RNA sequence: GGGAACGACUCGAGUAGAGUCGAAAAGACGCGAGAGACGCGAGACGCGCAAUGGGAGAAGCCGCAAUAGAUGAUACGAAGGAAGAGGCAAGACGGAGAGCGCGCAACAAUCUCAAAUAACCAAGAAGCACGUAGUGCGUUUCGACGCACUACGUGCAAAAGAAACAACAACAACAAC
Reactivity to 2A3 in 0.01 (KOAc 150mM, MgCl2 10mM, bicine 150mM(pH8.5), 24C), signal-to-noise 1, nucleotides 027 to 126: g080a040c000g010c020g030a110g000a000g000a200c000g030c050g080a030g000a000c000g000c000g000c020a060a110u170g000g080g010a030g000a000a000g020c050c000g030c000a050a000u100a080g060a050u180g000a050u090a200c020g010a110a020g080g060a000a120g000a060g000g000c030a000a080g000a040c010g000g000a020g000a000g020c000g030c000g010c080a030a030c020a040a030u090c000u030c000a060a260a140u140a060a000c000c000a010a010g040a040a110
Reactivity to DMS in 0.01 (KOAc 150mM, MgCl2 10mM, bicine 150mM(pH8.5), 24C), signal-to-noise 1, nucleotides 027 to 126: g000a090c090g000c000g030a300g000a150g000a120c140g000c000g030a060g010a120c000g000c000g010c070a170a050u150g020g050g000a060g000a060a070g000c010c000g000c000a170a000u000a000g000a020u000g000a130u000a210c040g000a060a000g000g070a190a260g060a010g030g000c060a190a010g020a090c040g000g000a010g000a000g000c020g120c000g040c220a000a010c180a190a100u000c040u000c000a020a000a220u020a110a170c070c140a050a000g000a040a110